[RMDB]
Overview:
Chemical mapping of a 177-nucleotide RNA with DMS and 2A3. Values are in units of 0.01, from 0 to 300, in steps of 10. The DMS profile rests on 2,183 reads. As a SHAPE reagent, 2A3 marks flexible, mostly unpaired nucleotides at the ribose 2'-OH. The 2A3 profile rests on 2,011 reads.

RNA sequence: GGGAACGACUCGAGUAGAGUCGAAAAGGAGCACUCCCAGCUUGCAGAUUACGGGGUGGAUCAGGACGGCACCGAGCUGGCUUCCAUGGCUUGGGCACCGGGUUCCGGGCAGGAAGAGGCCAUGCGCGUUACACGUAAGCUUCGGCUUACGUGUAACAAAAGAAACAACAACAACAAC
Reactivity to DMS in 0.01 (KOAc 150mM, MgCl2 10mM, bicine 150mM(pH8.5), 24C), signal-to-noise 2, nucleotides 027 to 126: g000g000a040g020c020a100c160u000c010c000c020a140g010c040u010u010g020c030a070g010a110u010u010a120c090g000g000g000g020u000g010g010a060u010c060a060g000g010a140c080g000g020c090a080c100c060g020a070g020c010u000g000g000c060u000u000c060c030a190u010g010g000c000u000u020g000g020g010c040a080c120c080g000g010g000u010u000c030c040g000g000g000c040a060g010g020a050a150g010a080g000g010c000c020a050u010g020c030g000c170
Reactivity to 2A3 in 0.01 (KOAc 150mM, MgCl2 10mM, bicine 150mM(pH8.5), 24C), signal-to-noise 1, nucleotides 027 to 126: g070g010a000g000c020a000c030u050c000c000c000a020g030c010u000u060g100c070a020g040a130u070u140a070c070g000g020g000g030u030g010g060a090u070c020a010g030g100a050c040g060g000c010a040c060c010g030a030g000c040u060g030g000c000u060u010c030c000a060u090g000g000c000u000u010g020g000g000c040a060c040c140g130g000g000u100u040c000c030g000g000g010c020a020g030g010a020a020g050a020g030g000c010c020a040u160g030c090g000c010
Source: RMDB library OK2TST, as collected in RNAgym.